[RMDB]
RNA sequence: GGGAACGACUCGAGUAGAGUCGAAAACUUUUGAAGAUGAAAUCACUUUUACAUAAGGAAGAAACUUUUCUGUAAAAAUUAAUGAAUUUUGUUAUUUUUGUUCCAUUUUCAAGAACUGAAGAGAAUCCCUAUGUGGUUACUUCGGUAACCACAUAGGAAAAGAAACAACAACAACAAC
Reactivity to 2A3 in 0.01 (KOAc 150mM, MgCl2 10mM, bicine 150mM(pH8.5), 24C), signal-to-noise 3, nucleotides 027 to 126: c020u150u170u040u040g050a010a010g020a020u040g050a060a100a040u120c010a010c010u010u040u000u050a050c040a030u170a070a050g070g020a080a130g130a120a200a050c020u190u110u090u080c050u010g030u030a050a070a130a200a190u120u260a100a110u140g050a030a050u060u040u160u160g040u030u060a120u080u110u040u170u180g050u050u070c050c020a020u000u000u070u040c000a000a050g020a140a050c010u160g030a070a030g090a070g050a080a110u040c000